[RMDB]
RNA sequence: GGGAACGACUCGAGUAGAGUCGAAAAGAUAUGGACUACUCGGUUUCCACGAAGAACUCGGAAACGAGGGAGUGGGACCGAGGUAGUCCUAAGUCAAAACGUUGACCUGGUUCGCCAGGUCAACGAAUCUAUGAAGAUCCUUCGGGAUCUUCAUAGAAAAAGAAACAACAACAACAAC
Reactivity to 2A3 in 0.01 (KOAc 150mM, MgCl2 10mM, bicine 150mM(pH8.5), 24C), signal-to-noise 1, nucleotides 027 to 126: g030a020u080a050u180g000g000a000c000u000a000c000u010c000g000g050u050u100u120c020c010a030c000g210a260a150g010a060a010c010u020c010g000g020a060a060a070c030g000a020g000g010g030a020g000u000g000g030g000a000c010c000g000a000g000g000u000a000g000u020c000c010u010a040a000g030u000c020a020a000a060a130c000g010u000u000g000a000c000c000u010g000g050u030u120c190g070c110c000a000g000g000u000c000a010a000c000g000a000a000
Reactivity to DMS in 0.01 (KOAc 150mM, MgCl2 10mM, bicine 150mM(pH8.5), 24C), signal-to-noise 3, nucleotides 027 to 126: g000a040u000a300u010g000g010a000c000u000a000c000u000c010g010g010u000u010u010c000c010a010c000g010a080a160g000a090a230c000u000c000g000g000a100a090a170c000g010a020g000g000g000a050g000u000g000g010g000a010c000c000g010a000g020g000u000a000g000u000c000c000u000a010a050g000u000c050a100a060a110a160c020g010u000u000g000a010c000c000u000g000g000u000u010c260g010c000c000a010g000g000u010c000a000a000c000g000a050a040